[RMDB]
An RNA of 170 nucleotides, treated with 2A3 and DMS and read out base by base. DMS (dimethyl sulfate) methylates the pairing face of unpaired adenines and cytosines. For 2A3, 3,550 sequencing reads were counted. High 2A3 reactivity points to a flexible backbone, as in loops and unpaired stretches. Source: RMDB library 15KLIB, as collected in RNAgym. Reactivities are rounded to 0.1 and cut off at 0 and 3.
RNA sequence: GGGAACGACUCGAGUAGAGUCGAAAACCACACUCCUUCCCCCCUGCGGGCUCCCCCCAUAAGAUGACGAGGACCCCACUCAUCGGGGUCCGCAGUCUCAUCCUUUCUUACCUGAUGGCCGGCAUGGUUCGAGGACUCUUCGGAGUCCUCAAAAGAAACAACAACAACAAC
Reactivity to 2A3 in 0.01 (KOAc 150mM, MgCl2 10mM, bicine 150mM(pH8.5), 24C), signal-to-noise 2, nucleotides 027 to 129: c020c000a060c000a030c060u060c020c040u070u100c000c010c020c020c010c000u020g000c000g040g000g010c000u020c000c000c000c000c000c000a040u040a030a020g040a060u080g000a000c030g000a030g020g010a000c000c000c010c010a000c090u250c060a100u220c050g000g000g000g020u010c020c000g010c030a030g010u020c000u010c040a000u050c000c000u040u040u010c030u090u040a090c000c020u010g040a100u050g010g000c000c000g090g010c000a040u100g030g040u080u080c020
Reactivity to DMS in 0.01 (KOAc 150mM, MgCl2 10mM, bicine 150mM(pH8.5), 24C), signal-to-noise 5, nucleotides 027 to 129: c050c020a200c200a160c060u000c010c040u050u000c030c010c010c030c020c090u040g030c050g020g010g060c040u010c020c020c030c030c000c030a080u070a070a090g000a000u000g010a080c070g030a150g000g040a020c030c010c000c000a120c090u020c270a190u060c190g050g010g010g050u020c030c010g050c070a000g010u000c050u030c090a140u040c130c070u020u090u090c000u060u020a060c080c070u000g030a110u060g000g050c050c020g000g090c000a070u040g010g040u040u030c090